[RMDB]
Structure probing data (DMS) for a 177-nucleotide construct.

RNA sequence: GGGAACGACUCGAGUAGAGUCGAAAAGAUAUGGAGUUAGUGUGAGUCGCGAUGAAAUCGGAAACGAUGGAGCGACCACAUAGUAACUCCUAAGUCAAACACAGUUUCCCUUCGGGGAAACUGUGAACAAAACGCCAUUCUUCGGAAUGGCGUUUUGAAAAGAAACAACAACAACAAC
Reactivity to DMS in 0.01 (KOAc 150mM, MgCl2 10mM, bicine 150mM(pH8.5), 24C), signal-to-noise 1, nucleotides 027 to 126: g000a080u030a300u030g010g010a010g000u010u000a060g030u010g000u000g000a260g000u000c010g020c020g000a160u020g000a040a130a010u010c000g020g020a140a110a180c020g010a010u000g030g000a080g030c010g010a010c010c000a010c000a010u000a090g010u010a000a010c000u000c010c000u000a020a100g010u000c050a170a080a240c000a010c010a020g000u000u000u000c000c000c010u000u000c260g010g000g000g000a000a000a000c000u000g030u010g000a050a140
DMS adducts were read by reverse transcription with MarathonRT.